[RMDB]
RNA sequence: GGGAACGACUCGAGUAGAGUCGAAAAAGAGAACAGAAGACCUUGUUGUCAUUGAGGGCAACCAAGAUGAAGGUGAUAGUGAUCCACAGAAAAAAGUCGAUGAAAAGACAGUUCCGGGGGAGUCAAAACAGCACUCCAAAAGCAGUGGAUCAAGUAGAAAGAUAGAUGUAUUCGUACAUCUAUCUUUAAAAGAAACAACAACAACAAC
Reactivity to DMS in 0.01 (KOAc 150mM, MgCl2 10mM, bicine 150mM(pH8.5), 24C), signal-to-noise 3, nucleotides 027 to 156: a070g000a150g010a090a130c050a180g010a120a100g000a090c030c040u000u010g020u010u000g000u000c010a170u000u010g000a250g020g010g000c040a080a070c010c020a050a130g010a110u000g010a100a040g020g010u000g000a090u000a070g010u000g020a050u000c020c010a020c010a230g020a010a040a070a040a090a130g020u000c020g030a180u010g010a130a110a110a260g010a050c020a100g020u000u000c030c050g030g010g000g020g000a120g010u010c030a000a050a070a120c060a090g030c070a070c030u010c010c010a050a020a070a090g010c060a130g030u000g000g010a050u010c020a030a100g010u000a080g010
Reactivity to 2A3 in 0.01 (KOAc 150mM, MgCl2 10mM, bicine 150mM(pH8.5), 24C), signal-to-noise 2, nucleotides 027 to 156: a000g110a020g020a080a040c060a020g140a130a030g070a080c030c000u080u040g020u020u030g010u030c060a110u070u210g080a140g100g000g000c000a010a000c000c030a050a040g020a060u080g080a050a060g010g030u060g010a090u140a090g090u030g020a000u000c000c000a000c010a040g150a060a100a030a010a000a020g040u030c020g020a020u150g090a140a080a010a050g010a020c010a030g020u090u030c110c070g090g000g030g000g010a030g000u060c040a000a030a150a260c050a040g080c080a020c040u040c010c000a100a010a000a020g040c050a010g000u010g000g030a000u010c000a000a010g040u060a030g100